[RMDB]
RNA sequence: GGGAACGACUCGAGUAGAGUCGAAAAGUACGCGGAUCGACGUAUCUAGAGCUCAUGCUAGCGUACCAUGGCGAUCGCCAUGACUAGGUGACAUGCGUCUAGACAUGGCGUACCUAGUACUCGAUCGGCACUACAAGCAUUUCGAUGCUUGUAGUGCAAAAGAAACAACAACAACAAC
Reactivity to 2A3 in 0.01 (KOAc 150mM, MgCl2 10mM, bicine 150mM(pH8.5), 24C), signal-to-noise 4, nucleotides 027 to 126: g010u010a010c020g010c070g120g010a000u000c010g020a020c110g030u030a030u080c020u030a020g010a030g040c030u020c080a000u030g010c020u060a020g020c010g030u010a010c000c010a010u010g000g000c050g100a190u070c040g000c000c000a000u000g010a010c010u020a020g060g020u050g070a110c100a220u260g100c060g030u010c030u010a010g010a040c000a000u020g000g000c020g000u000a010c000c000u000a000g010u010a010c000u000c000g010a020u030c000g040
Reactivity to DMS in 0.01 (KOAc 150mM, MgCl2 10mM, bicine 150mM(pH8.5), 24C), signal-to-noise 4, nucleotides 027 to 126: g010u000a020c020g020c030g010g020a010u010c010g010a050c300g020u000a010u010c020u000a010g000a230g000c090u010c020a010u000g020c020u000a130g010c050g020u000a010c060c010a010u010g000g000c040g010a180u000c050g000c010c010a010u000g010a070c030u000a020g000g010u000g010a180c290a150u010g020c020g000u000c010u000a030g000a130c010a010u000g000g010c040g010u000a020c090c010u010a020g010u000a030c040u000c010g000a030u000c010g000
The record gives the reactivity of an RNA of 177 nucleotides to 2A3 and DMS. The RNA was probed in 150 mM KOAc, 10 mM MgCl2 and 150 mM bicine (pH 8.5) at 24 C. The 2A3 profile rests on 7,262 reads. Source: RMDB library OK2TRN, as collected in RNAgym. High 2A3 reactivity points to a flexible backbone, as in loops and unpaired stretches. DMS adducts were read by reverse transcription with MarathonRT.